The record gives the reactivity of an RNA of 207 nucleotides to 2A3.
RNA sequence: GGGAACGACUCGAGUAGAGUCGAAAACAAGCUGCUAUUGUUGAACAUUAAGGUAUUUCUACUUUCCUGGACAUAAAGAAUAAGGCUGUGAAUAAUAUGUCUUUGUUCAGGCUUCAUAUUUUUAGGCAUAAAUUCUUAGAAAUGGAAUUGCUGAAUACCAUACCGGUAGGUUCGCCUACCGGUAUGGAAAAGAAACAACAACAACAAC
Reactivity to 2A3 in 0.01 (KOAc 150mM, MgCl2 10mM, bicine 150mM(pH8.5), 24C), signal-to-noise 1, nucleotides 027 to 156: c030a000a050g060c020u100g000c040u140a030u120u100g020u010u090g060a110a050c050a150u090u080a050a050g040g020u060a010u000u130u000c020u070a050c040u000u010u050c000c000u020g010g000a000c030a040u230a050a160a050g060a060a090u050a050a020g020g000c020u030g050u090g080a100a040u150a120a000u040a040u200g070u020c020u020u100u060g010u010u020c010a040g000g000c000u000u010c040a070u010a110u150u090u000u050u240a010g010g000c010a020u150a100a200a030u020u010c030u070u090a030g080a060a100a000u090g000g010a000a000u030u080g010c030u030g010a050a010u030a060
The 2A3 profile rests on 417 reads. The data come from the RNA Mapping Database (RMDB), library OK3TST. For 2A3 the reverse transcriptase was SuperScript II with manganese.